[RMDB]
RNA sequence: GGGAACGACUCGAGUAGAGUCGAAAAGAACCGCGAUUCGUCGCGGUUCGAGCGCCGUAGCGCGCAAGGGCGUAACGGCAGCAUUAGCGCGCAGCUGCCGACGAUCGGGUGGUUUCGACCACCCGAAACGUAACAUACAUUUCGAUGUAUGUUACGUAAAAGAAACAACAACAACAAC
Reactivity to DMS in 0.01 (KOAc 150mM, MgCl2 10mM, bicine 150mM(pH8.5), 24C), signal-to-noise 9, nucleotides 027 to 126: g000a010a010c000c000g020c000g010a020u000u020c200g020u000c010g020c000g000g000u000u000c000g010a090g010c030g010c000c040g020u010a090g020c090g010c010g020c030a110a080g010g000g000c030g010u000a080a090c040g010g000c000a020g010c010a090u010u010a100g010c060g010c030g020c070a170g000c010u000g010c000c000g010a100c130g000a120u000c010g000g000g020u000g010g010u000u000u010c190g010a030c010c000a010c000c000c000g000a000a020
Reactivity to 2A3 in 0.01 (KOAc 150mM, MgCl2 10mM, bicine 150mM(pH8.5), 24C), signal-to-noise 9, nucleotides 027 to 126: g000a000a000c000c000g000c000g010a020u040u060c180g020u000c000g110c000g000g000u000u000c000g000a000g000c010g000c000c020g240u190a050g020c060g000c010g000c160a070a100g100g050g020c050g040u090a160a070c010g060g000c010a000g000c020a060u050u130a070g050c040g000c020g000c070a020g010c000u010g000c020c010g020a060c030g020a080u040c000g000g000g000u010g000g040u030u040u090c200g070a030c000c000a000c000c000c000g000a000a000
About this RNA:
Chemical mapping of a 177-nucleotide RNA with DMS and 2A3. DMS adducts were read by reverse transcription with MarathonRT. Source: RMDB library M2PK50, as collected in RNAgym. Conditions: 150 mM KOAc, 10 mM MgCl2 and 150 mM bicine (pH 8.5), 24 C. For 2A3 the reverse transcriptase was SuperScript II with manganese.